[RMDB]
The record gives the reactivity of an RNA of 207 nucleotides to 2A3 and DMS. Reactivities are given for positions 27 through 156. The 2A3 profile rests on 3,296 reads.
RNA sequence: GGGAACGACUCGAGUAGAGUCGAAAAGGGUUUGAGCCAUCGCCCGAAUAGGAUGGAUGAUACAAGUCGACAUUGUACGCGACGUAGUACGUACUCAUUAGUGCGAAAGCACGGUUAGUCCGACUAGGCAGGGACGAUCUUCUGUCAAUACUUAGAAACCCAGUAUGAUGUUCGCAUCAUACUGGGUAAAAGAAACAACAACAACAAC
Reactivity to 2A3 in 0.01 (KOAc 150mM, MgCl2 10mM, bicine 150mM(pH8.5), 24C), signal-to-noise 5, nucleotides 027 to 156: g080g020g010u030u080u110g060a020g000c010c000a040u040c040g030c020c000c020g020a070a110u190a060g050g030a010u030g030g010a010u060g020a010u030a110c130a140a070g020u030c010g030a060c070a110u120u250g050u150a050c100g000c010g020a010c020g000u010a000g020u020a110c010g000u020a000c000u010c020a020u030u060a060g000u000g000c000g040a090a010a000g000c010a000c020g000g010u010u010a000g000u020c030c010g010a010c050u060a040g030g020c010a020g020g030g010a030c060g040a110u030c040u130u020c020u040g020u020c010a060a050u060a200c080u120u100a080g070a090a120
Reactivity to DMS in 0.01 (KOAc 150mM, MgCl2 10mM, bicine 150mM(pH8.5), 24C), signal-to-noise 3, nucleotides 027 to 156: g040g010g020u000u000u010g010a120g020c020c050a090u000c050g020c010c020c010g000a130a110u010a100g000g000a080u000g010g030a060u000g010a150u000a080c080a070a120g020u000c030g000a100c060a190u000u000g000u000a020c040g010c020g010a140c150g010u000a200g000u010a040c020g050u000a040c010u000c140a120u000u000a100g050u000g020c020g000a190a090a250g010c000a030c030g000g010u000u000a140g000u000c000c030g010a130c040u000a120g030g010c050a080g010g020g000a060c040g010a100u000c060u010u000c050u010g010u000c030a060a120u000a080c060u000u010a140g000a130a100